[RMDB]
RNA sequence: GGGAACGACUCGAGUAGAGUCGAAAAGCCUUGCUCACAGCGCCCAUCAGUUCCGCCCAGGCCACGCUGGCGUCCUGAUUGUGCACGACGGUUUGAGCGGACAGGCGAACCUUGCUGGCCAUGGCAGCAGCAUUUUCCUAUUCGUAGGAAAAUGCUGAAAAGAAACAACAACAACAAC
Reactivity to 2A3 in 0.01 (KOAc 150mM, MgCl2 10mM, bicine 150mM(pH8.5), 24C), signal-to-noise 8, nucleotides 027 to 126: g010c010c000u030u070g020c020u030c030a070c010a030g020c020g020c020c010c020a110u110c050a030g050u120u020c020c030g020c000c030c000a010g000g040c040c010a060c070g060c070u050g060g010c010g040u060c000c020u110g090a230u170u150g070u110g060c030a010c080g170a030c090g080g020u030u090u100g020a010g000c010g000g020a020c020a010g010g000c000g010a050a050c010c010u040u110g010c040u030g040g000c020c030a090u070g020g000c020a030g030
Reactivity to DMS in 0.01 (KOAc 150mM, MgCl2 10mM, bicine 150mM(pH8.5), 24C), signal-to-noise 8, nucleotides 027 to 126: g010c020c010u000u000g010c030u000c030a070c100a090g010c050g020c020c020c080a120u010c110a090g010u000u000c040c020g010c040c020c040a070g010g010c020c040a080c150g020c070u010g010g010c020g020u000c090c040u000g010a120u010u010g010u010g020c060a070c060g010a120c120g020g000u000u010u000g010a060g020c010g010g000a050c070a060g010g010c010g010a070a080c040c030u000u000g010c050u000g000g000c090c060a090u000g000g010c070a100g010

Chemical mapping of a 177-nucleotide RNA with 2A3 and DMS. It was measured as part of the RMDB library OK2TST. Reactivities are given for positions 27 through 126. The 2A3 profile rests on 18,086 reads. For DMS, 14,969 sequencing reads were counted. DMS (dimethyl sulfate) methylates the pairing face of unpaired adenines and cytosines. The reactions ran in a buffer of 150 mM KOAc, 10 mM MgCl2 and 150 mM bicine (pH 8.5), at 24 C. For DMS the reverse transcriptase was MarathonRT.